This 177-nucleotide RNA was probed chemically with 2A3 and DMS. For DMS the reverse transcriptase was MarathonRT. The reactions ran in a buffer of 150 mM KOAc, 10 mM MgCl2 and 150 mM bicine (pH 8.5), at 24 C. The data come from the RNA Mapping Database (RMDB), library RFM100.
[RMDB]
RNA sequence: GGGAACGACUCGAGUAGAGUCGAAAAGAGUGGUUUUUAACCAGACGAUGUGUGUAAGCACAAGGAAGAGACACCCAAUAACAGGUCUGUGAUGCCCGUAGAUGUUCGGGGCUCCACGCGCACUACAUCUCACUCCAGCUUUCGAGCUGGAGUGAGAAAAAGAAACAACAACAACAAC
Reactivity to 2A3 in 0.01 (KOAc 150mM, MgCl2 10mM, bicine 150mM(pH8.5), 24C), signal-to-noise 1, nucleotides 027 to 126: g120a010g000u040g030g150u060u000u020u040u190a020a030c010c000a020g000a010c050g060a100u000g000u000g000u000g070u130a190a000g000c000a000c030a050a020g010g020a080a060g000a000g080a040c000a040c000c000c070a020a020u090a040a110c020a020g050g030u030c000u060g010u060g000a040u230g020c000c000c080g060u000a060g000a190u050g040u040u000c020g000g000g000g000c000u040c070c030a040c000g030c000g000c020a000c010u050a000c000a070
Reactivity to DMS in 0.01 (KOAc 150mM, MgCl2 10mM, bicine 150mM(pH8.5), 24C), signal-to-noise 1, nucleotides 027 to 126: g000a030g060u000g000g000u000u130u000u000u090a040a110c020c000a050g010a000c010g000a010u000g010u080g000u000g040u000a120a300g000c040a000c050a050a240g020g000a120a080g060a060g080a000c120a040c030c050c100a000a180u050a060a130c220a030g000g040u000c050u000g000u000g000a140u000g000c100c000c040g070u010a020g000a210u000g000u020u030c240g000g000g070g000c080u020c050c000a050c000g000c100g030c220a080c040u000a020c200a210